Source: RMDB library OK1LIB, as collected in RNAgym. Chemical mapping of a 177-nucleotide RNA with DMS and 2A3. In probing experiments dimethyl sulfate is read out at A N1 and C N3, which are open when not base-paired.
RNA sequence: GGGAACGACUCGAGUAGAGUCGAAAAGCUCUAGGAGACUAGAGCGAUACGUUAGAGAGCUCGUGGCAUGACUAACGGAGAGCCAGGUACGAGGUUGCCAGAGGACAUAGCUAUAGCUAUGUCCAAAGAGCUAUCAUAGGUUCGCCUAUGAUAGCUCAAAAGAAACAACAACAACAAC
Reactivity to DMS in 0.01 (KOAc 150mM, MgCl2 10mM, bicine 150mM(pH8.5), 24C), signal-to-noise 4, nucleotides 027 to 126: g000c000u000c000u000a000g000g000a300g000a210c000u010a010g000a010g000c020g000a060u030a030c040g010u000u020a020g000a220g000a130g000c040u010c100g010u020g010g000c060a080u020g000a190c040u000a020a060c050g020g000a090g000a090g000c030c020a060g000g030u000a030c050g000a060g030g010u000u000g000c040c010a120g010a240g000g000a010c000a020u000a000g010c000u030a140u020a150g020c000u000a000u000g000u000c000c000a000a030a080
Reactivity to 2A3 in 0.01 (KOAc 150mM, MgCl2 10mM, bicine 150mM(pH8.5), 24C), signal-to-noise 2, nucleotides 027 to 126: g000c000u000c000u000a030g000g030a070g030a080c000u000a000g000a000g010c020g000a010u020a010c010g030u040u040a030g010a000g000a060g090c000u010c120g090u090g040g000c040a050u040g020a120c000u020a030a000c000g030g000a110g000a000g040c020c030a030g030g020u020a040c050g070a070g140g020u060u010g030c000c040a050g030a060g060g000a000c000a000u000a000g000c000u140a030u000a300g000c000u000a000u010g000u000c010c000a010a000a000